[RMDB]
RNA sequence: GGGAACGACUCGAGUAGAGUCGAAAAACGAGUCUAGUUUGAAUUUGGGUGACUCGGUAUGUGGAUGAAUGAGUCGGAAGCUAAUUGGAUCAUAUCACGACCUGUGAAUGGACUCAAGGAAGCUCUCGUUAAUACUCUGGUUCGCCAGAGUAUUAACAAAAGAAACAACAACAACAAC
Reactivity to 2A3 in 0.01 (KOAc 150mM, MgCl2 10mM, bicine 150mM(pH8.5), 24C), signal-to-noise 3, nucleotides 027 to 126: a000c010g000a000g030u000c040u120a130g160u080u130u270g220a170a140u160u080u160g160g030g010u090g030a010c010u010c010g000g000u070a080u070g190u070g090g020a060u030g030a100a100u050g010a010g010u010c020g030g070a080a020g010c020u040a100a000u040u040g030g040a030u030c010a010u130a050u110c010a010c040g210a300c050c150u120g000u010g050a000a030u060g010g010a020c020u000c050a000a000g030g010a070a010g000c010u000c000u000c030
Reactivity to DMS in 0.01 (KOAc 150mM, MgCl2 10mM, bicine 150mM(pH8.5), 24C), signal-to-noise 4, nucleotides 027 to 126: a050c030g010a030g000u000c000u000a110g010u000u010u000g010a090a160u000u010u000g020g010g010u010g000a040c020u000c020g010g000u000a030u000g000u010g010g000a080u000g000a110a100u010g010a050g010u000c020g010g000a100a080g010c010u020a120a170u000u000g000g010a040u010c020a020u000a120u010c020a020c020g000a120c220c120u000g020u000g000a060a060u000g000g000a030c030u010c020a040a040g000g000a120a100g010c020u000c070u010c100
This 177-nucleotide RNA was probed chemically with 2A3 and DMS. Reactivities are given for positions 27 through 126. For 2A3 the reverse transcriptase was SuperScript II with manganese. Conditions: 150 mM KOAc, 10 mM MgCl2 and 150 mM bicine (pH 8.5), 24 C. For 2A3, 2,329 sequencing reads were counted. DMS adducts were read by reverse transcription with MarathonRT.